[RMDB]
Chemical mapping of a 170-nucleotide RNA with DMS and 2A3. High DMS reactivity at an A or C suggests that its Watson-Crick edge is free. It was measured as part of the RMDB library 15KLIB.
RNA sequence: GGGAACGACUCGAGUAGAGUCGAAAAACCGAGGGGGGUUCGAACUCAAGAAGAGAAGAUUUUCGAGGAAAUACUCCCAAGAAGUUCCCGGAGGGAUCCAAGAGACGGAUGACUUUCCCCCAUUGGUGCAUCGGUAGCUUCGGCUACCGAAAAAGAAACAACAACAACAAC
Reactivity to DMS in 0.01 (KOAc 150mM, MgCl2 10mM, bicine 150mM(pH8.5), 24C), signal-to-noise 3, nucleotides 027 to 129: a050c000c010g000a050g000g050g010g000g000g000u000u000c130g000a120a060c030u040c040a000a000g030a090a090g020a150g030a030a040g010a110u020u100u010u000c040g020a120g020g000a050a030a070u020a090c070u020c030c050c090a130a090g030a060a130g010u030u020c060c080c020g020g010a120g000g000g000a070u090c000c000a100a140g010a090g000a090c160g050g040a030u030g000a110c090u000u030u040c010c060c000c040c030a140u010u030g030g000u020g030c030a030
Reactivity to 2A3 in 0.01 (KOAc 150mM, MgCl2 10mM, bicine 150mM(pH8.5), 24C), signal-to-noise 2, nucleotides 027 to 129: a000c000c000g010a050g000g000g030g020g000g020u030u080c030g030a060a050c010u050c050a090a020g070a040a020g050a030g000a110a020g010a050u000u010u040u060c020g000a000g010g050a020a000a000u030a070c030u000c010c030c000a000a010g050a050a000g010u030u030c000c020c000g000g020a010g000g000g000a020u000c000c000a100a030g050a030g010a120c030g060g040a010u040g050a090c000u040u000u040c020c000c000c000c030a050u000u170g010g010u020g030c060a040